The data come from the RNA Mapping Database (RMDB), library RFMREP. Chemical mapping of a 177-nucleotide RNA with DMS and 2A3. The 2A3 profile rests on 749 reads. The reactions ran in a buffer of 150 mM KOAc, 10 mM MgCl2 and 150 mM bicine (pH 8.5), at 24 C.
RNA sequence: GGGAACGACUCGAGUAGAGUCGAAAAAGACAUAGGGUAGUUCCGUUUGAAAGCGCGCCCUAGUGCGCCGUUUGUCGAAAGGGAAGCCGGUUAAUAUUCCGGCACCUGGAUGUGGAUUCUCCACGGCUCUACAUGGAGGAUUCGUCCUCCAUGUAGAAAAAGAAACAACAACAACAAC
Reactivity to DMS in 0.01 (KOAc 150mM, MgCl2 10mM, bicine 150mM(pH8.5), 24C), signal-to-noise 2, nucleotides 027 to 126: a060g000a090c020a020u010a300g000g010g010u000a090g000u010u010c020c010g010u000u000u020g010a080a050a090g000c040g000c020g000c010c010c140u000a110g000u010g010c010g010c100c030g030u000u000u000g020u010c030g010a020a060a070g020g000g000a090a150g010c000c010g000g020u000u010a090a120u000a300u010u020c000c010g030g020c020a010c000c010u010g000g020a130u000g020u000g010g010a250u010u000c060u000c020c060a090c130g000g010c200
Reactivity to 2A3 in 0.01 (KOAc 150mM, MgCl2 10mM, bicine 150mM(pH8.5), 24C), signal-to-noise 1, nucleotides 027 to 126: a000g030a020c010a050u080a000g010g030g000u020a060g110u190u010c000c000g010u150u040u190g160a090a070a010g020c020g000c000g000c060c010c040u050a090g030u100g140c060g020c000c010g010u010u100u030g250u020c020g000a070a030a070g020g030g000a150a030g000c010c020g050g020u050u030a210a150u060a170u170u080c000c010g000g000c010a000c000c010u050g040g000a020u060g030u070g000g090a080u090u120c140u000c050c020a030c020g060g000c010